RNA sequence: GGGAACGACUCGAGUAGAGUCGAAAACAUAUUUAUGUUCUACACCUCACACUUAUGUUUAUAUUUAUGUUUAUGUUUAUGUCCAUAUGUUUGCAAUCUAUUCACUUACUAUUAAACCAUAUUAUUACUGUUUAAGCAUCUUCGGAUGCUUAAACAGAAAAGAAACAACAACAACAAC
Reactivity to 2A3 in 0.01 (KOAc 150mM, MgCl2 10mM, bicine 150mM(pH8.5), 24C), signal-to-noise 2, nucleotides 027 to 126: c000a000u040a090u020u110u070a120u110g020u040u000c020u020a060c000a050c080c000u040c110a080c030a040c060u120u120a070u300g050u000u050u020a160u150a060u110u140u050a120u040g030u000u060u000a060u070g090u050u090u020a110u060g060u020c000c000a010u030a010u170g150u050u020u030g070c060a100a120u000c020u130a040u000u040c030a030c110u030u090a030c010u040a010u190u030a140a000a000c020c000a030u000a090u300u070a060u050u050a220